Chemical mapping of a 207-nucleotide RNA with DMS and 2A3. The RNA was probed in 150 mM KOAc, 10 mM MgCl2 and 150 mM bicine (pH 8.5) at 24 C. High 2A3 reactivity points to a flexible backbone, as in loops and unpaired stretches. The data come from the RNA Mapping Database (RMDB), library OK3TST. The 2A3 profile rests on 2,139 reads.
[RMDB]
RNA sequence: GGGAACGACUCGAGUAGAGUCGAAAACGCAUGCGAAAGCAUGCGGCUAUGCUAAUGCAUGGCGAGGGGUAACAUCGCGCGCUUCCCCCGUAUGUGGUUAUUAUUCCGCAUACGAUUACCAGUGUCUGUUAUUAUUCAGAUACAUGGACCGCGCGUACGUAAUCCAGUAGUUCGCUACUGGAUUACGAAAAGAAACAACAACAACAAC
Reactivity to DMS in 0.01 (KOAc 150mM, MgCl2 10mM, bicine 150mM(pH8.5), 24C), signal-to-noise 2, nucleotides 027 to 156: c060g010c000a010u000g010c000g010a220a130a180g080c000a030u010g000c000g000g010c060u000a030u000g000c010u000a160a160u010g030c010a030u000g060g030c050g020a050g030g010g050g010u010a060a090c100a040u010c040g040c010g010c010g000c090u000u000c010c020c010c080c010g070u000a000u000g010u020g020g000u000u000a090u010u020a300u000u000c010c000g040c000a010u000a000c000g000a060u010u000a120c040c010a100g000u000g030u000c000u000g000u000u010a120u010u010a180u020u000c030a000g000a020u000a000c030a140u010g010g000a170c130c010g010c000g010c000g040u000a060
Reactivity to 2A3 in 0.01 (KOAc 150mM, MgCl2 10mM, bicine 150mM(pH8.5), 24C), signal-to-noise 4, nucleotides 027 to 156: c030g000c000a000u000g000c010g060a120a000a020g010c000a000u000g010c000g000g000c000u010a000u000g030c040u150a300a020u300g020c000a010u000g010g000c040g020a070g000g000g000g030u080a050a060c020a180u080c040g000c010g000c010g020c040u160u130c000c000c000c010c000g000u000a000u010g010u030g020g100u070u030a150u190u060a210u250u080c000c010g000c010a010u000a000c000g000a010u010u160a070c000c000a000g020u000g010u000c000u000g090u040u130a290u270u030a120u130u140c010a000g000a010u000a020c090a280u010g000g000a010c030c010g000c000g000c000g000u020a010